[RMDB]
RNA sequence: GGGAACGACUCGAGUAGAGUCGAAAAAUUGGAGAGAGGCAGUUAUGAGACGUAUAUUUUGUAACCGGGGUAGAAUACCGGUGAUUGACUGGAGGGCAAGUCUGGUGCCAGCAGCCGCGGUAAUUCCAUUGACGUUUAUAUUCGUAUAAACGUCAAUAAAAGAAACAACAACAACAAC
Reactivity to DMS in 0.01 (KOAc 150mM, MgCl2 10mM, bicine 150mM(pH8.5), 24C), signal-to-noise 9, nucleotides 027 to 126: a080u010u020g000g010a060g010a070g010a070g010g010c050a060g010u010u010a050u010g000a100g010a060c090g010u010a070u020a070u010u010u010u010g010u010a110a040c020c010g000g000g010g010u010a080g010a120a100u060a060c020c010g000g010u000g010a070u020u010g000a070c070u000g000g000a090g000g010g000c060a050a070g010u010c040u000g000g010u010g010c040c030a070g010c060a070g010c040c040g020c050g010g000u020a040a110u010u010c040c050
Reactivity to 2A3 in 0.01 (KOAc 150mM, MgCl2 10mM, bicine 150mM(pH8.5), 24C), signal-to-noise 9, nucleotides 027 to 126: a000u080u090g040g000a030g010a000g000a010g030g000c030a020g030u080u110a130u190g070a040g020a050c030g060u020a080u010a090u210u140u130u120g030u030a010a010c010c010g010g000g010g030u050a060g120a190a030u080a120c010c000g000g010u010g020a030u030u080g040a030c020u010g010g030a050g030g010g020c030a050a000g020u000c040u040g050g010u040g030c010c000a010g000c010a000g020c010c010g010c010g010g000u060a060a070u090u040c010c020
The data come from the RNA Mapping Database (RMDB), libraries RFM100 and RFMREP. The record gives the reactivity of an RNA of 177 nucleotides to DMS and 2A3. For DMS the reverse transcriptase was MarathonRT.